An RNA of 207 nucleotides, treated with 2A3 and read out base by base. For 2A3 the reverse transcriptase was SuperScript II with manganese. For 2A3, 448 sequencing reads were counted. The reactions ran in a buffer of 150 mM KOAc, 10 mM MgCl2 and 150 mM bicine (pH 8.5), at 24 C.

[RMDB]
RNA sequence: GGGAACGACUCGAGUAGAGUCGAAAAGUUCGGGGCAAUAUCGAUCGCGUAGUUAAAGAAGUCAUUCAGCACUUUUUCCGCUACGUCUGUAGAGUAGUUCUCUCCGCAUUCAUGCUUGUGAGCAAGUGCGCCAAUGUGAAGAUCGAACACCGGGUAGUCUGGAGAACGGAUUCGUCCGUUCUCCAGAAAAAGAAACAACAACAACAAC
Reactivity to 2A3 in 0.01 (KOAc 150mM, MgCl2 10mM, bicine 150mM(pH8.5), 24C), signal-to-noise 1, nucleotides 027 to 156: g100u110u140c060g000g000g010g000c060a050a100u010a060u190c020g000a000u030c040g010c010g010u010a010g000u020u070a030a020a000g000a000a000g010u010c030a110u300u230c110a050g000c100a030c000u040u000u000u080u030c040c050g070c040u010a020c000g000u000c040u040g100u120a000g010a040g050u130a000g020u030u000c030u030c000u010c010c030g020c010a030u070u180c030a050u210g000c000u150u140g060u190g210a070g040c000a000a030g000u070g020c040g000c000c030a130a070u100g030u070g090a120a000g000a000u010c030g000a000a030c010a110c070c020g000g000g000u050a030g080